[RMDB]
RNA sequence: GGGAACGACUCGAGUAGAGUCGAAAAGGGGUCAACUUGCACUACAACUAUGAAGGAGGUUGUCAGCACACUGUUGCUGUACUGAAGCCUCCACGGUACAGCAACAGUGUGCUUGGAUUUACCUCUGGAGUUGUAAACAAGUUGACGGAGGCACCCACCACAAGUACAUGUUCGCAUGUACUUGUGGAAAAGAAACAACAACAACAAC
Reactivity to 2A3 in 0.01 (KOAc 150mM, MgCl2 10mM, bicine 150mM(pH8.5), 24C), signal-to-noise 2, nucleotides 027 to 156: g140g000g000g010u000c000a000a000c000u000u010g030c080a070c160u050a010c010a010a000c010u050a190u300g040a060a040g030g030a010g000g020u220u220g060u100c040a010g000c020a000c000a000c000u030g000u030u000g000c010u000g000u000a000c000u010g000a080a000g000c000c000u000c000c000a000c000g000g000u000a010c010a010g000c010a050a000c010a000g000u000g000u000g000c000u000u010g010g000a000u030u000u220a020c000c000u000c000u010g000g000a020g000u000u000g000u020a020a020a050c000a000a010g000u000u010g000a000c030g000g000a000g020g000c000a040c010c000c010a040
Reactivity to DMS in 0.01 (KOAc 150mM, MgCl2 10mM, bicine 150mM(pH8.5), 24C), signal-to-noise 1, nucleotides 027 to 156: g010g000g040g010u000c000a020a000c000u010u040g050c010a080c060u000a060c020a000a060c020u010a140u020g000a260a270g000g000a060g040g020u010u000g030u010c040a140g070c000a020c040a010c000u000g000u000u000g040c000u000g030u000a030c010u000g000a020a120g040c020c010u010c010c020a020c060g030g010u000a030c000a010g010c030a040a070c020a020g030u010g000u000g000c000u010u000g000g020a090u000u010u000a060c010c010u000c000u010g010g000a030g010u000u000g000u000a040a080a050c040a010a020g010u000u000g020a040c030g040g020a030g020g020c030a230c020c020c000a300